[RMDB]
RNA sequence: GGGAACGACUCGAGUAGAGUCGAAAAAACACACACACUUCAGUUGACCCGGGCAAGGUUCUAGUAGGAAGUACUAUGUGAUUUUUUUUUUUUUUUCACACUCAGAACAUAAGUGUCAAUGCUCUCGGCAAUCAACUUUUUUCGAAAAGUUGAUUGCAAAAGAAACAACAACAACAAC
Reactivity to DMS in 0.01 (KOAc 150mM, MgCl2 10mM, bicine 150mM(pH8.5), 24C), signal-to-noise 1, nucleotides 027 to 126: a080a020c000a080c000a030c090a050c070a060c000u040u000c110a070g030u000u010g000a090c090c010c020g060g000g050c130a160a050g000g000u000u000c030u010a090g040u000a040g000g010a060a070g020u000a060c010u040a080u040g020u000g010a000u000u000u000u000u000u000u000u000u000u000u070u000u000u020u000c050a000c060a170c040u000c070a020g000a060a010c110a070u030a050a040g000u010g020u000c020a020a080u000g000c100u000c020u000c100g000
Reactivity to 2A3 in 0.01 (KOAc 150mM, MgCl2 10mM, bicine 150mM(pH8.5), 24C), signal-to-noise 3, nucleotides 027 to 126: a000a000c100a020c020a000c000a000c000a000c010u020u080c050a080g030u100u050g120a060c000c020c000g020g010g030c050a090a030g030g000u050u030c010u030a070g030u050a040g060g150a100a000g020u030a040c050u040a060u080g020u010g000a040u010u000u000u000u000u000u000u000u000u000u000u000u090u080u050c010a020c000a000c010u070c020a040g030a100a050c030a090u130a160a060g020u010g040u060c020a010a060u080g010c010u000c010u000c030g020

The record gives the reactivity of an RNA of 177 nucleotides to DMS and 2A3. For DMS, 1,782 sequencing reads were counted. The data come from the RNA Mapping Database (RMDB), library RFM100.